[RMDB]
RNA sequence: GGGAACGACUCGAGUAGAGUCGAAAAGAUAUGGAACCAUAGUGGAGCACGGUUCGGAAACGAACCAGUGCGUUGAAACUAGGUUCCUAAGUCAAACAGCAAGGUUAGGUUCGCCUAACCUUGCUGAGAUUUAGCAGAUCUUCGGAUCUGCUAAAUCAAAAGAAACAACAACAACAAC
Reactivity to DMS in 0.01 (KOAc 150mM, MgCl2 10mM, bicine 150mM(pH8.5), 24C), signal-to-noise 3, nucleotides 027 to 126: g010a010u000a030u010g000g010a000a010c000c000a180u000a010g020u010g000g010a090g020c000a010c000g000g000u000u000c010g000g000a010a010a040c000g010a020a010c010c000a030g020u000g010c010g000u020u010g020a140a180a010c000u000a020g010g000u000u000c000c000u000a000a070g000u000c000a180a160a300c000a010g000c000a010a010g000g010u000u010a010g000g000u010u010c300g020c000c000u010a010a000c000c000u000u000g000c000u000g010a030
Reactivity to 2A3 in 0.01 (KOAc 150mM, MgCl2 10mM, bicine 150mM(pH8.5), 24C), signal-to-noise 2, nucleotides 027 to 126: g000a000u010a000u040g010g000a000a000c010c030a270u010a030g020u010g010g050a020g010c000a000c010g010g010u010u000c010g010g000a000a000a010c000g000a000a000c000c070a000g000u000g020c000g030u090u050g000a010a000a000c000u010a010g010g000u010u030c000c000u000a000a000g010u000c000a050a090a140c010a020g010c000a000a020g010g010u000u000a010g010g050u040u140c300g080c080c000u010a000a000c000c010u010u000g020c000u000g000a010